Chemical mapping of a 177-nucleotide RNA with DMS and 2A3. The 2A3 profile rests on 1,702 reads.

RNA sequence: GGGAACGACUCGAGUAGAGUCGAAAACAUCAACGCCAGGCCGUGGCCGAAAGAGGCUUCGCCGCGCCAGUAUCGCAUCUGGCCGGUCUUCGGGUUCGGCGUCUUGAUUGACGACGAGAUACAUGCGGUCCCUACCAACUUUCGAGUUGGUAGGGACAAAAGAAACAACAACAACAAC
Reactivity to DMS in 0.01 (KOAc 150mM, MgCl2 10mM, bicine 150mM(pH8.5), 24C), signal-to-noise 2, nucleotides 027 to 126: c120a090u000c030a010a050c070g060c010c010a090g000g000c030c010g070u000g020g000c010c010g010a060a150a130g020a220g000g020c000u000u010c050g000c020c010g000c270g010c000c000a020g000u000a070u000c150g000c190a110u000c000u010g010g000c000c010g010g010u000c020u020u000c300g000g000g010u000u000c070g000g000c010g000u000c050u020u000g030a110u000u020g010a180c060g040a040c060g010a100g000a190u000a060c100a030u000g000c060g030
Reactivity to 2A3 in 0.01 (KOAc 150mM, MgCl2 10mM, bicine 150mM(pH8.5), 24C), signal-to-noise 2, nucleotides 027 to 126: c010a010u030c030a000a040c020g050c010c020a040g000g040c010c010g020u010g040g010c020c020g090a170a280a030g270a080g020g010c000u010u020c030g020c020c000g020c050g040c000c000a000g000u000a090u220c130g010c100a060u050c010u020g020g000c010c010g010g020u000c000u170u100c090g010g010g000u060u080c030g010g020c000g020u030c050u040u070g030a050u000u120g060a020c010g000a000c040g010a030g050a170u120a070c060a060u100g040c060g020